[RMDB]
RNA sequence: GGGAACGACUCGAGUAGAGUCGAAAAAAGGACUGGUUCGCCAGUCCUUAUUCAUUCGUACGCAACGAAGCGUAAGUCAUUACGCAAAUGACUAAUAGCGUAUACGAAAGGACUUCGGUCCUUUCAAUCACACCUACAAUUUCGAUUGUAGGUGUGAAAAAGAAACAACAACAACAAC
Reactivity to 2A3 in 0.01 (KOAc 150mM, MgCl2 10mM, bicine 150mM(pH8.5), 24C), signal-to-noise 5, nucleotides 027 to 126: a000a000g010g000a010c010u020g000g030u030u050c090g020c040c000a000g000u000c000c000u000u000a000u000u020c000a000u000u020c020g030u020a010c000g000c050a100a040c060g120a110a070g020c020g030u020a030a000g110u100c100a190u020u050a020c040g000c040a050a070a100u130g050a040c060u110a050a130u070a150g010c010g020u040a030u030a060c080g020a000a000a000g000g000a000c010u040u070c270g070g000u000c000c000u000u000u000c000a000a010
Reactivity to DMS in 0.01 (KOAc 150mM, MgCl2 10mM, bicine 150mM(pH8.5), 24C), signal-to-noise 6, nucleotides 027 to 126: a020a020g000g000a010c010u010g010g020u000u000c220g030c010c010a000g000u000c000c000u000u000a010u010u000c070a200u010u000c100g000u000a020c010g000c010a100a110c120g000a090a140g000c040g000u000a030a040g000u010c200a060u000u000a020c080g000c080a070a070a070u000g000a100c130u010a060a080u010a140g000c000g010u010a040u010a070c250g000a010a000a010g000g000a020c000u000u000c130g020g000u000c000c000u000u000u010c000a070a140
Conditions: 150 mM KOAc, 10 mM MgCl2 and 150 mM bicine (pH 8.5), 24 C.
Chemical mapping of a 177-nucleotide RNA with 2A3 and DMS.
Reactivities are rounded to 0.1 and cut off at 0 and 3.
For 2A3 the reverse transcriptase was SuperScript II with manganese.